Annotation
Structure probing data (DMS) for a 177-nucleotide construct. For DMS the reverse transcriptase was MarathonRT. The DMS profile rests on 4,348 reads. Values are in units of 0.01, from 0 to 300, in steps of 10. The reactions ran in a buffer of 150 mM KOAc, 10 mM MgCl2 and 150 mM bicine (pH 8.5), at 24 C.
RNA sequence: GGGAACGACUCGAGUAGAGUCGAAAAGAUAUGGACAUAGCACCCGAGUCACCUAAGGGAGGAGAUACUCGGAAACGAGUAAUUCCGACGAUCUUACAUGGUGACUCGGGUGCUAUGUCCUAAGUCAGUUUAACCUAUAGUUCGCUAUAGGUUAAACAAAAGAAACAACAACAACAAC
Reactivity to DMS in 0.01 (KOAc 150mM, MgCl2 10mM, bicine 150mM(pH8.5), 24C), signal-to-noise 3, nucleotides 027 to 126: g000a060u000a300u010g000g020a010c000a010u000a000g020c000a020c000c010c000g010a040g020u000c000a020c000c000u010a010a030g000g010g010a050g010g000a020g000a090u010a000c010u000c010g000g000a080a100a210c020g010a040g020u020a020a120u000u000c010c010g020a080c220g000a020u000c010u000u020a090c300a170u000g020g010u000g000a000c000u000c000g010g000g000u000g000c000u000a000u000g010u000c000c010u000a010a060g010u010c040a140